[RMDB]
RNA sequence: GGGAACGACUCGAGUAGAGUCGAAAAUUGACUGCGAAAUGUGUUACACGACACAAGGAUUGGAACUCACUAGAGUAACUGUUAUCAAUGAAGAUUGCAACGUUAUCUAUGAAACGUUGGUCAAGCCUGGUAAUCAAGUGUUCGCACUUGAUUACCAAAAAGAAACAACAACAACAAC
Reactivity to DMS in 0.01 (KOAc 150mM, MgCl2 10mM, bicine 150mM(pH8.5), 24C), signal-to-noise 4, nucleotides 027 to 126: u020u000g000a020c050u020g000c010g020a110a080a140u020g030u000g000u000u000a140c280a160c240g020a030c010a020c050a040a110g000g010a190u030u010g010g040a150a080c110u020c030a080c120u010a030g000a020g000u000a020a020c030u060g020u000u000a140u000c010a040a040u020g000a170a130g030a050u000u000g000c190a010a000c030g000u030u000a040u000c070u020a050u040g000a050a050a050c030g000u000u000g000g010u000c020a030a040g000c090c010
Reactivity to 2A3 in 0.01 (KOAc 150mM, MgCl2 10mM, bicine 150mM(pH8.5), 24C), signal-to-noise 7, nucleotides 027 to 126: u010u020g000a000c000u020g000c020g050a080a090a080u090g010u010g020u030u030a170c140a030c200g030a000c010a000c000a050a070g140g020a080u210u260g110g050a080a040c030u010c030a050c130u050a010g030a010g090u040a040a000c030u080g010u030u070a070u040c040a060a110u210g110a130a060g040a080u010u080g020c030a040a020c080g000u020u020a020u030c030u020a050u060g060a030a060a020c010g030u060u240g000g010u000c000a010a030g030c000c010